[RMDB]
RNA sequence: GGGAACGACUCGAGUAGAGUCGAAAAGAUUACGUGUCGUUGUGGAAUCGGUACUACGCACGAGAUUCCAAGGUCUCUGUAGUACGUCCGCUGGUGACGUCUUUGGAGUCACGUUCGAUAUACGAAAGGUAUCUACUACGUUCGCGUAGUAGAUACCAAAAGAAACAACAACAACAAC
Reactivity to 2A3 in 0.01 (KOAc 150mM, MgCl2 10mM, bicine 150mM(pH8.5), 24C), signal-to-noise 3, nucleotides 027 to 126: g060a050u110u210a030c050g010u050g030u050c060g020u040u100g000u010g010g070a050a010u090c050g000g000u010a040c030u020a010c010g030c020a010c090g010a000g000a010u130u000c070c000a050a040g050g010u020c010u000c050u120g030u030a050g010u020a040c010g030u000c000c000g020c060u060g070g070u080g000a010c020g110u010c010u010u050u110g060g000a030g000u020c030a030c040g030u060u030c060g040a050u020a010u060a090c030g070a110a000a000
Reactivity to DMS in 0.01 (KOAc 150mM, MgCl2 10mM, bicine 150mM(pH8.5), 24C), signal-to-noise 3, nucleotides 027 to 126: g000a110u010u010a080c180g000u000g010u000c020g000u000u020g010u010g000g000a020a100u020c050g020g010u010a010c040u000a010c000g000c160a060c120g010a020g000a000u000u010c110c160a100a050g000g010u000c040u000c020u000g010u010a030g020u000a000c020g010u000c000c020g000c070u000g040g010u030g000a010c020g010u010c040u010u010u000g010g010a070g000u000c000a030c010g000u010u000c000g010a070u000a040u010a060c020g000a040a090a090